Notes:
Structure probing data (2A3 and DMS) for a 177-nucleotide construct. DMS adducts were read by reverse transcription with MarathonRT. The RNA was probed in 150 mM KOAc, 10 mM MgCl2 and 150 mM bicine (pH 8.5) at 24 C. The data come from the RNA Mapping Database (RMDB), library OK2TRN.
RNA sequence: GGGAACGACUCGAGUAGAGUCGAAAACGGUAAAAGUACAGGCGGGUACGGCAGAGUGCGGCCGCAUUACUUUUGUAAUGAGCACUCCGGCCGCAGCCUCCGUCGCCGCCUCGACGGAGGGGACCGGAUAGCAGGUAGGAUUCGUCCUACCUGCUAUAAAAGAAACAACAACAACAAC
Reactivity to 2A3 in 0.01 (KOAc 150mM, MgCl2 10mM, bicine 150mM(pH8.5), 24C), signal-to-noise 1, nucleotides 027 to 126: c020g000g050u140a150a070a080a060g000u010a030c000a000g030g050c000g030g040g000u040a060c040g110g080c170a030g020a050g150u070g010c000g000g010c020c030g000c000a000u000u000a020c000u130u300u200u190g010u000a000a030u000g010a010g140c050a010c100u040c000c000g000g000c000c050g000c020a010g110c000c000u010c000c000g000u000c020g000c000c000g000c000c000u000c030g000a000c000g020g070a010g000g010g000g080a140c120c060g110g060
Reactivity to DMS in 0.01 (KOAc 150mM, MgCl2 10mM, bicine 150mM(pH8.5), 24C), signal-to-noise 2, nucleotides 027 to 126: c070g000g000u010a060a090a110a110g000u000a050c050a030g010g010c000g010g010g000u000a000c010g010g010c180a120g000a070g020u000g020c000g000g000c010c020g010c010a000u000u000a000c000u010u010u010u010g010u000a010a010u000g000a160g030c110a110c080u000c170c030g010g020c010c000g000c010a080g010c010c000u000c000c000g010u000c020g020c020c010g010c020c000u000c000g020a030c030g010g010a030g010g010g010g000a070c090c070g010g000